[RMDB]
RNA sequence: GGGAACGACUCGAGUAGAGUCGAAAAAGUCCAAUCCAAAGGAAGAAUGCCAUGUUCAACACCUACUAUGCUCUAGCAGUCAGUGUGGUGACAGCCAUCUCAGGGUCAUCCUUGGCUCACCCCCAAAGGAAGAUCAGCAUGGUGAGCAGGGCGCUGAUAAAUGCUAGUACUUCGGUACUAGCAUUUAAAAAGAAACAACAACAACAAC
Reactivity to 2A3 in 0.01 (KOAc 150mM, MgCl2 10mM, bicine 150mM(pH8.5), 24C), signal-to-noise 2, nucleotides 027 to 156: a000g120u000c030c000a010a030u030c050c030a100a070a100g100g000a010a070g050a130a030u200g020c000c000a040u030g030u030u060c060a120a050c000a050c030c000u010a040c020u030a010u150g000c010u030c060u180a160g030c080a020g060u170c010a000g010u050g030u080g160g000u000g050a050c030a050g010c030c000a000u080c080u060c180a060g070g030g000u000c000a030u070c020c010u020u000g030g000c020u050c040a050c050c000c000c000c020a060a050a040g030g010a050a050g000a050u060c010a020g060c040a040u040g010g020u030g040a000g040c010a000g030g010g020c020g000c020u020g030a070
Reactivity to DMS in 0.01 (KOAc 150mM, MgCl2 10mM, bicine 150mM(pH8.5), 24C), signal-to-noise 2, nucleotides 027 to 156: a070g010u020c020c040a090a170u000c050c090a050a120a180g020g010a080a100g010a100a060u000g010c030c010a040u000g010u000u000c030a070a060c040a010c010c000u000a030c040u000a090u000g010c030u000c060u020a100g040c050a060g010u000c170a050g020u000g040u020g000g020u000g000a060c040a120g000c020c030a010u000c040u000c050a120g000g000g030u000c030a060u000c000c000u000u000g020g040c040u010c140a180c100c060c150c030c040a060a030a090g000g010a050a110g000a060u000c000a060g000c090a030u010g000g000u000g010a090g010c040a060g000g000g060c030g000c030u000g000a200